[RMDB]
RNA sequence: GGGAACGACUCGAGUAGAGUCGAAAACAAUAUCACUAAAAUCGAAAUGUCCACUUGUAUCGCUUGUCGUGUCGGCGAAGUUGCGCAUAAGUAUUCAGGAACAUGUGUUGAUUGUGAUGAGUUUAUACGUAGUAUCACCAACCCAGCACUGACCGCGCGCACGUCUGCCGUUCGCGGCAGACGUGCGAAAAGAAACAACAACAACAAC
Reactivity to 2A3 in 0.01 (KOAc 150mM, MgCl2 10mM, bicine 150mM(pH8.5), 24C), signal-to-noise 2, nucleotides 027 to 156: c020a050a050u200a040u260c070a030c070u260a100a060a100a020u170c080g080a090a000a050u180g000u010c030c040a040c120u080u050g070u090a050u010c000g070c020u040u120g000u010c050g090u050g000u050c110g100g120c070g040a080a050g100u140u230g020c040g000c010a000u070a180a090g120u170a170u090u090c040a040g040g000a090a020c050a100u060g000u000g000u020u010g000a060u000u090g000u000g030a050u080g050a000g120u030u110u050a060u090a050c070g070u020a020g070u070a050u000c020a000c010c000a000a080c080c030c000a000g000c000a010c000u000g010a030c010c000g010c000g010
Source: RMDB library OK3TST, as collected in RNAgym. Structure probing data (2A3) for a 207-nucleotide construct. 2A3 adducts were read by reverse transcription with SuperScript II with manganese.